[RMDB]
RNA sequence: GGGAACGACUCGAGUAGAGUCGAAAACUGAAUUAUCCGCUGCUUGGAGGAAUUUCGCGAGCUCUUGCCCACAAUGGUGCUGCACUCGGCGGAUCGUUUUCGAGCGGCUGCUGCACCACACGCUGUACUACUGGAUUAGGUUCGCCUAAUCCAGUAGAAAAGAAACAACAACAACAAC
Reactivity to DMS in 0.01 (KOAc 150mM, MgCl2 10mM, bicine 150mM(pH8.5), 24C), signal-to-noise 4, nucleotides 027 to 126: c060u010g010a080a110u020u010a080u010c040c040g000c040u000g020c090u020u000g000g010a100g010g010a080a070u000u000u000c060g040c060g000a090g010c040u000c070u010u000g020c010c020c030a110c210a130a100u010g010g020u000g020c000u000g020c050a040c040u000c030g020g020c010g010g010a020u000c230g000u010u000u000u010c030g010a070g020c040g020g010c180u000g000c030u000g000c020a040c010c010a070c130a050c180g000c080u010g010u000a190
Reactivity to 2A3 in 0.01 (KOAc 150mM, MgCl2 10mM, bicine 150mM(pH8.5), 24C), signal-to-noise 3, nucleotides 027 to 126: c010u020g020a050a060u180u050a060u210c030c020g000c050u070g020c010u040u100g030g050a020g020g070a110a090u080u160u150c070g010c010g040a030g050c030u010c010u130u160g030c000c010c010a050c030a030a080u100g050g010u030g000c000u020g000c010a010c030u020c020g050g000c030g010g050a030u050c030g060u030u050u070u140c060g040a150g060c020g040g010c030u020g000c000u030g020c030a010c020c000a020c000a000c050g100c030u070g020u120a060
The record gives the reactivity of an RNA of 177 nucleotides to DMS and 2A3. Conditions: 150 mM KOAc, 10 mM MgCl2 and 150 mM bicine (pH 8.5), 24 C. Source: RMDB library OK2TRN, as collected in RNAgym. As a SHAPE reagent, 2A3 marks flexible, mostly unpaired nucleotides at the ribose 2'-OH. For 2A3, 3,552 sequencing reads were counted. For 2A3 the reverse transcriptase was SuperScript II with manganese.